[RMDB]
RNA sequence: GGGAACGACUCGAGUAGAGUCGAAAAUAGAUACGGGUGAGGUGGCACUUGACAAUUACGUCGGUAAGUCAGUGAGGAAAGGUAAGAUGGCGAAUGACAAGAAUGAGGUCGUUAUGACAGUAAAGGCACUGGUUGCGCAAGAGAAGGCAAGGAAGACCUUAGAGAGCUUAUUCGUAAGCUCUCUAAGAAAAGAAACAACAACAACAAC
Reactivity to DMS in 0.01 (KOAc 150mM, MgCl2 10mM, bicine 150mM(pH8.5), 24C), signal-to-noise 2, nucleotides 027 to 156: u010a120g040a160u000a060c100g010g010g030u000g040a090g000g030u000g010g000c040a080c060u000u030g040a030c070a100a160u000u000a110c130g020u000c050g000g010u000a080a200g040u010c060a060g010u000g000a090g030g000a040a110a100g000g040u000a040a110g030a070u010g020g040c020g050a030a090u020g000a100c050a030a120g030a110a050u000g030a090g050g040u010c060g020u010u010a030u020g000a050c010a080g020u000a060a060a050g000g010c000a060c030u000g010g020u010u000g060c000g000c060a040a080g000a080g000a050a040g020g010c060a010a060g010g000a060a060g000a070c150

Chemical mapping of a 207-nucleotide RNA with DMS. DMS adducts were read by reverse transcription with MarathonRT. It was measured as part of the RMDB library OK3TST. The RNA was probed in 150 mM KOAc, 10 mM MgCl2 and 150 mM bicine (pH 8.5) at 24 C.